Chemical mapping of a 177-nucleotide RNA with DMS and 2A3. Source: RMDB library M2PK50, as collected in RNAgym. DMS adducts were read by reverse transcription with MarathonRT. DMS (dimethyl sulfate) methylates the pairing face of unpaired adenines and cytosines. Values cover nucleotides 27 to 126.
[RMDB]
RNA sequence: GGGAACGACUCGAGUAGAGUCGAAAAGAACCGCGAUUCGUCGCGGUUCGAGCGCCGUAGCGCGCAACGGCGAAACGGCAGCAUUAGCGCGCAGCUGCCGACGAUCGGGUGGUUUCGACCACCCGAAAUCGACUAAAGGAUUCGUCCUUUAGUCGAUAAAAGAAACAACAACAACAAC
Reactivity to DMS in 0.01 (KOAc 150mM, MgCl2 10mM, bicine 150mM(pH8.5), 24C), signal-to-noise 8, nucleotides 027 to 126: g010a010a010c000c000g020c000g020a030u010u010c190g020u000c000g030c000g000g010u000u000c000g010a090g020c030g010c000c010g020u000a060g000c060g000c020g010c030a080a030c030g000g000c000g010a060a090a170c040g010g000c010a020g000c010a090u010u000a090g000c040g010c030g030c050a180g000c000u000g010c000c000g010a060c190g000a110u000c000g010g000g020u000g010g010u000u000u010c170g010a030c010c010a010c000c000c000g000a000a030
Reactivity to 2A3 in 0.01 (KOAc 150mM, MgCl2 10mM, bicine 150mM(pH8.5), 24C), signal-to-noise 4, nucleotides 027 to 126: g010a010a000c000c010g000c000g020a020u020u070c170g030u010c000g120c000g010g000u000u000c000g000a000g000c030g000c000c000g050u070a040g050c030g000c010g010c090a030a010c000g020g010c050g030a110a040a070c010g010g000c000a000g000c020a070u040u130a070g040c020g010c010g000c060a010g000c000u000g000c010c000g040a100c060g030a070u050c010g000g000g000u010g000g020u020u070u080c110g060a020c000c000a000c000c000c000g000a010a010